About this RNA:
Chemical mapping of a 207-nucleotide RNA with DMS and 2A3. For DMS the reverse transcriptase was MarathonRT. The data come from the RNA Mapping Database (RMDB), library RNAMAK. The DMS profile rests on 7,460 reads. For 2A3 the reverse transcriptase was SuperScript II with manganese.
RNA sequence: GGGAACGACUCGAGUAGAGUCGAAAAACCCUUUUCGAAGGGUGUCUUUUCCUAAGUCGAAACGAGGUCUAAGACAGGGUGACCGAGUCGGAAACGACGUUUGACGUCACCUCGAGACCGAGUUUCGAUAUGGACGUCUAGUCGGUUCGCCGACUAAAUAUUGACAGAUCUUCGGAUCUGUCAAUAUAAAAGAAACAACAACAACAAC
Reactivity to DMS in 0.01 (KOAc 150mM, MgCl2 10mM, bicine 150mM(pH8.5), 24C), signal-to-noise 3, nucleotides 027 to 156: a080c000c000c010u000u000u020u000c150g030a080a030g010g020g030u000g000u010c030u010u000u000u000c000c010u010a090a250g020u000c010g000a020a060a040c010g010a300g030g010u000c010u000a150a180g020a160c300a070g000g020g010u010g050a040c000c020g000a120g040u000c010g030g000a170a120a230c000g010a010c020g020u000u000u010g000a140c090g000u000c010a080c030c030u000c020g000a050g010a040c010c010g010a220g020u000u000u010c010g010a010u000a090u000g020g000a060c100g030u000c040u000a090g000u000c000g020g050u000u010c280g040c020c000g020a010c020u000a010a050
Reactivity to 2A3 in 0.01 (KOAc 150mM, MgCl2 10mM, bicine 150mM(pH8.5), 24C), signal-to-noise 3, nucleotides 027 to 156: a000c020c000c010u020u010u000u060c120g130a020a000g030g000g000u020g030u060c060u000u130u030u010c000c000u040a120a030g010u000c000g000a000a010a000c000g000a020g030g020u000c010u090a160a030g090a130c120a120g060g000g060u020g000a000c020c020g010a010g000u020c000g040g000a120a110a060c010g000a000c010g110u040u120u290g110a070c030g000u000c000a010c030c010u040c010g020a000g010a000c000c000g000a000g000u000u000u010c000g000a000u000a010u020g060g010a020c060g110u010c060u100a000g000u000c010g010g060u030u050c250g060c090c000g000a010c000u040a000a020